[RMDB]
Record summary: Conditions: 150 mM KOAc, 10 mM MgCl2 and 150 mM bicine (pH 8.5), 24 C. Structure probing data (2A3) for a 207-nucleotide construct. It was measured as part of the RMDB library PDB130.
RNA sequence: GGGAACGACUCGAGUAGAGUCGAAAAAGAUUCCCACUGUCCCUAUCUACUCGGGGAACUGGCUUGUCGGCUCUUCCUAUCAUACCAUUCGGUAAGCGUUGGAUUGUUCACCCACUAAUAGGGAACGUGAGCUGAAUUGAACUUAGGAACAGUUCAUCAUCCGGUAAGUGUUCGCACUUACCGGAUGAAAAGAAACAACAACAACAAC
Reactivity to 2A3 in 0.01 (KOAc 150mM, MgCl2 10mM, bicine 150mM(pH8.5), 24C), signal-to-noise 1, nucleotides 027 to 156: a000g030a120u010u030c000c000c000a000c020u030g020u000c000c010c000u000a060u100c060u150a060c020u060c050g010g000g010g030a050a050c010u010g050g110c000u050u080g130u080c000g000g010c020u030c090u120u050c050c000u160a210u210c080a070u050a060c000c020a060u060u060c130g010g010u050a000a060g060c000g030u000u030g030g050a220u090u020g040u150u120c100a190c040c030c000a000c040u150a020a080u130a300g030g000g000a000a000c030g000u010g010a000g030c010u030g030a000a100u070u050g050a090a040c030u010u030a100g120g000a010a080c010a040g010u090u010c010a010u020